[RMDB]
RNA sequence: GGGAACGACUCGAGUAGAGUCGAAAACAAGGAGGUGAAGAUCGAUAGCUUUUACAUGCGCAUGGCCCUGAAGGUGCUGACGCUGAGCGACGACCUGGGCGUCUACCGCAACGACCGCAUCCACAAGGCCGUGAGCGCCAGUCGCCGGCGCGAGCUCCAUUACGCGUCAUUUCGAUGACGCGUAAUGAAAAGAAACAACAACAACAAC
Reactivity to 2A3 in 0.01 (KOAc 150mM, MgCl2 10mM, bicine 150mM(pH8.5), 24C), signal-to-noise 4, nucleotides 027 to 156: c070a020a050g020g020a020g000g030u060g030a070a020g040a110u090c070g050a090u070a050g000c000u040u040u080u170a090c110a140u200g020c040g000c030a020u060g030g000c030c020c000u060g070a110a040g040g000u010g020c040u020g040a040c030g000c030u050g050a030g100c040g020a040c030g040a060c030c040u120g030g170g010c060g010u000c040u110a090c060c040g010c030a040a010c030g020a020c000c040g000c030a040u070c040c000a040c040a130a020g010g000c000c000g020u020g040a030g000c010g000c000c010a050g050u080c020g030c100c050g010g000c010g010c010g000a000g010c010u040c050
Reactivity to DMS in 0.01 (KOAc 150mM, MgCl2 10mM, bicine 150mM(pH8.5), 24C), signal-to-noise 2, nucleotides 027 to 156: c060a090a100g040g030a100g030g040u000g000a080a040g020a060u000c040g000a090u000a130g030c050u000u000u010u000a100c070a070u010g020c050g010c000a050u000g040g000c000c020c000u020g020a160a150g020g030u000g030c010u000g010a090c030g050c030u000g000a080g000c040g020a060c020g000a080c000c060u000g050g050g010c010g000u010c050u000a080c130c060g000c060a070a020c010g010a050c030c040g000c020a140u000c060c060a210c100a030a090g010g070c020c010g050u000g020a130g040c030g000c020c060a070g020u000c030g010c020c020g020g000c040g000c020g000a070g010c030u000c030